[RMDB]
RNA sequence: GGGAACGACUCGAGUAGAGUCGAAAAGAUAUGGAGUAGCGACGAAGUACGGAGUACAACAGCCCGUAAAAGCUCGGAAACGAGCUUUUACGGGACAUGUACAGGCGUACAGAGCUACUCCUAAGUCCAUUGUAACACCGUUCGCGGUGUUACAAUGAAAAGAAACAACAACAACAAC
Reactivity to DMS in 0.01 (KOAc 150mM, MgCl2 10mM, bicine 150mM(pH8.5), 24C), signal-to-noise 3, nucleotides 027 to 126: g000a130u020a300u010g000g010a030g030u000a000g020c000g010a290c230g000a090a180g010u000a000c000g020g000a300g020u000a010c000a040a110c250a190g010c010c000c000g000u000a000a000a000a000g010c000u000c000g000g000a120a130a270c000g000a030g010c000u000u000u000u000a010c010g000g000g000a000c080a040u000g020u010a000c010a040g010g020c000g000u000a000c010a050g000a240g000c000u010a000c010u000c000c000u000a000a100g000u000c050
Reactivity to 2A3 in 0.01 (KOAc 150mM, MgCl2 10mM, bicine 150mM(pH8.5), 24C), signal-to-noise 1, nucleotides 027 to 126: g050a030u170a100u290g010g000a020g030u040a000g030c020g300a300c060g070a300a010g000u020a010c010g000g080a090g000u020a000c000a110a030c040a150g080c030c000c030g000u000a010a010a000a020g020c000u000c010g050g000a000a060a040c000g000a000g000c000u000u000u000u000a000c000g000g040g000a000c000a020u000g000u000a000c000a000g150g300c010g000u000a020c010a000g050a000g050c000u010a000c000u000c010c000u000a040a000g020u000c000
The record gives the reactivity of an RNA of 177 nucleotides to DMS and 2A3. Reactivities are given for positions 27 through 126. For 2A3, 2,733 sequencing reads were counted. The RNA was probed in 150 mM KOAc, 10 mM MgCl2 and 150 mM bicine (pH 8.5) at 24 C. For 2A3 the reverse transcriptase was SuperScript II with manganese. High DMS reactivity at an A or C suggests that its Watson-Crick edge is free. It was measured as part of the RMDB library TTRINS.